Overview
Chemical mapping of a 177-nucleotide RNA with 2A3 and DMS. Values are in units of 0.01, from 0 to 300, in steps of 10. The DMS profile rests on 8,740 reads. DMS adducts were read by reverse transcription with MarathonRT. It was measured as part of the RMDB library OK1LIB.

[RMDB]
RNA sequence: GGGAACGACUCGAGUAGAGUCGAAAAGAUACUCCACCAACGCAAAUUGGACAUCACAUUUCUCUUUUUGAGUGAUUGUCGUGAUGAUCGACUCAAUGCUCUGUUGUGCAGCAUGGAGGUACGACGAGUUGCUGCACUUUUUCGAAAGUGCAGCAACAAAAGAAACAACAACAACAAC
Reactivity to 2A3 in 0.01 (KOAc 150mM, MgCl2 10mM, bicine 150mM(pH8.5), 24C), signal-to-noise 9, nucleotides 027 to 126: g070a030u130a070c030u020c030c010a050c030c030a110a050c050g080c170a040a110a090u120u080g060g010a020c000a020u030c010a020c020a050u000u130u000c010u040c000u070u160u140u210u300g120a030g010u060g040a060u070u120g110u130c090g020u020g020a040u060g030a070u040c010g040a030c010u000c020a030a020u010g010c010u000c070u190g100u120u050g030u070g020c020a000g010c000a010u040g070g020a010g010g090u110a050c050g050a020c040g010a050
Reactivity to DMS in 0.01 (KOAc 150mM, MgCl2 10mM, bicine 150mM(pH8.5), 24C), signal-to-noise 5, nucleotides 027 to 126: g010a120u040a050c100u030c020c030a170c060c020a060a090c080g030c210a050a090a210u030u010g000g000a120c010a020u000c000a000c030a100u020u030u000c000u000c010u010u010u040u030u030g020a020g020u010g000a040u010u010g020u010c070g020u000g000a030u000g000a210u000c020g000a060c010u000c030a050a030u010g000c010u000c030u020g020u020u000g000u000g000c300a010g000c020a000u000g000g000a030g000g020u010a050c060g010a090c130g010a130